An RNA of 177 nucleotides, treated with 2A3 and DMS and read out base by base. The reactions ran in a buffer of 150 mM KOAc, 10 mM MgCl2 and 150 mM bicine (pH 8.5), at 24 C. The 2A3 profile rests on 59,825 reads. For 2A3 the reverse transcriptase was SuperScript II with manganese.

RNA sequence: GGGAACGACUCGAGUAGAGUCGAAAACGGCAGUGGCAUCGGUAUGUGACCUAAGGUAUCUUCCCGCGACCUUUAAGCGUCCUCGCCGAUACGGUACUUCUCAAGGUCGCGUCUCGUUCUGCUAUGGUCUACUCAUCGUGUUCGCGCGAUGGGUAGAAAAAGAAACAACAACAACAAC
Reactivity to 2A3 in 0.01 (KOAc 150mM, MgCl2 10mM, bicine 150mM(pH8.5), 24C), signal-to-noise 9, nucleotides 027 to 126: c000g010g000c010a020g020u030g040g010c020a030u040c010g010g000u040a030u060g050u050g040a020c000c010u020a040a010g030g000u020a030u030c030u020u030c010c000c000g000c020g020a030c010c000u010u020u090a070a000g020c010g020u010c000c010u030c020g000c000c000g000a020u010a040c010g000g010u010a020c000u030u020c020u000c030a020a020g010g000u000c000g000c010g030u000c010u010c020g040u060u000c010u010g020c000u020a040u080g060g010
Reactivity to DMS in 0.01 (KOAc 150mM, MgCl2 10mM, bicine 150mM(pH8.5), 24C), signal-to-noise 9, nucleotides 027 to 126: c050g010g000c020a040g010u010g000g010c060a040u020c020g010g000u010a050u010g010u020g000a060c040c020u000a060a060g000g010u010a040u010c070u000u000c030c020c020g020c130g000a030c030c020u010u010u020a090a080g010c170g010u000c020c030u000c050g010c030c020g000a090u000a030c110g000g010u010a050c070u010u010c060u010c080a080a040g000g000u000c010g000c020g000u010c050u010c070g010u010u000c020u000g010c030u010a090u020g010g010

For DMS the reverse transcriptase was MarathonRT. Values are in units of 0.01, from 0 to 300, in steps of 10. The data come from the RNA Mapping Database (RMDB), library OK1LIB.